[RMDB]
RNA sequence: GGGAACGACUCGAGUAGAGUCGAAAAGAAGCGUAUGCCUGCGUGUCGUGGUUGAUCAGUUGGCCACGUAAAAAGCUGAUCAAAAACUUUUAGUUGCAGAAGAAAACUUUGCACUGGCCGCCUAAUUACAGGUAGCCCGGACUGAUGGGGAUCGCCGCUAACAUGCCAGGUUCGCCUGGCAUGUUAGAAAAGAAACAACAACAACAAC
Reactivity to 2A3 in 0.01 (KOAc 150mM, MgCl2 10mM, bicine 150mM(pH8.5), 24C), signal-to-noise 1, nucleotides 027 to 156: g070a050a000g000c000g000u040a000u130g030c010c040u050g000c000g010u040g110u080c020g010u010g000g010u010u020g010a030u060c010a010g000u020u060g150g000c020c010a040c000g040u090a020a020a000a000a000g020c030u050g000a040u000c000a060a080a000a000a020c020u160u080u050u160a050g000u020u080g000c010a010g020a100a010g010a000a240a060a050c080u190u080u050g000c000a030c050u010g010g050c030c000g040c020c010u130a190a150u260u130a050c050a020g000g000u020a060g000c000c010c010g060g040a000c030u020g050a070u080g030g000g000g000a010u010c000g030c020c010g010
Record summary
This 207-nucleotide RNA was probed chemically with 2A3. The reactions ran in a buffer of 150 mM KOAc, 10 mM MgCl2 and 150 mM bicine (pH 8.5), at 24 C. Source: RMDB library RSTRND, as collected in RNAgym. Reactivities are rounded to 0.1 and cut off at 0 and 3.